[RMDB]
RNA sequence: GGGAACGACUCGAGUAGAGUCGAAAAGAUACAAGAGCGUGUGGGAAUCAUUAAGGCUUAUAGCCAUGGGGUGGGGACGCAAGGCUAUGUGAUCACGCCCAAGAUUGCCAAAGUUUUUUUGAAACACCGUUCUCUUUAGUUUCGACUAAAGAGAACGAAAAGAAACAACAACAACAAC
Reactivity to DMS in 0.01 (KOAc 150mM, MgCl2 10mM, bicine 150mM(pH8.5), 24C), signal-to-noise 5, nucleotides 027 to 126: g000a160u010a090c110a070a080g000a020g020c050g010u010g030u010g010g000g000a070a070u000c040a070u010u000a090a090g010g000c020u010u010a130u010a110g010c020c040a100u010g010g010g010g010u000g010g020g020g020a060c050g010c030a030a110g010g020c160u000a070u000g010u000g010a070u000c030a050c060g000c000c000c000a100a070g000a070u000u010g010c020c060a050a120a090g010u000u000u000u000u000u000u000g000a100a080a070c110a100c250
Reactivity to 2A3 in 0.01 (KOAc 150mM, MgCl2 10mM, bicine 150mM(pH8.5), 24C), signal-to-noise 4, nucleotides 027 to 126: g040a010u150a060c030a020a050g020a010g070c030g010u060g040u050g090g020g050a040a060u020c020a040u070u140a100a050g010g000c010u170u160a110u250a280g010c000c030a030u050g010g000g020g020u070g000g040g070g010a000c020g000c040a010a040g160g000c060u120a130u130g020u020g010a070u020c000a000c030g040c000c000c010a020a010g040a060u040u050g070c010c000a040a030a050g020u040u000u000u000u000u030u110g090a090a050a000c040a020c090